[RMDB]
The record gives the reactivity of an RNA of 177 nucleotides to 2A3 and DMS. The RNA was probed in 150 mM KOAc, 10 mM MgCl2 and 150 mM bicine (pH 8.5) at 24 C.
RNA sequence: GGGAACGACUCGAGUAGAGUCGAAAAGUGCACGAAAGGCAAUGGCACAAAUUCGGUGAAGCCACCGGUGCGAUCCUGGAUAUCGCGCAGGACUUGUAGGUGAGCCACCCAGUGGCGUGGCCCGUCACUCAGUGGACUGAUUCGUCAGUCCACUGAGAAAAGAAACAACAACAACAAC
Reactivity to 2A3 in 0.01 (KOAc 150mM, MgCl2 10mM, bicine 150mM(pH8.5), 24C), signal-to-noise 1, nucleotides 027 to 126: g020u010g000c010a010c090g050a130a080a020g070g000c060a060a100u100g060g010c010a010c000a050a110a080u280u140c070g000g000u040g070a090a040g050c020c020a010c000c000g050g000u030g020c040g010a090u070c000c040u070g030g030a060u050a010u140c050g010c000g000c040a030g000g000a030c050u090u080g130u160a040g040g050u040g030a010g030c000c000a010c020c020c020a080g010u030g020g000c070g000u030g000g000c010c060c020g040u040c000a010
Reactivity to DMS in 0.01 (KOAc 150mM, MgCl2 10mM, bicine 150mM(pH8.5), 24C), signal-to-noise 3, nucleotides 027 to 126: g000u030g000c120a060c070g030a090a110a100g000g030c050a120a050u010g020g000c020a040c020a070a080a090u000u000c090g010g030u000g000a130a230g030c030c040a160c000c020g010g020u000g000c010g000a050u010c050c060u000g010g000a170u010a030u000c030g030c010g000c020a040g000g000a110c150u000u000g030u000a090g000g000u000g000a230g010c010c030a080c030c020c130a120g020u000g000g000c050g000u010g020g000c060c000c020g000u010c160a100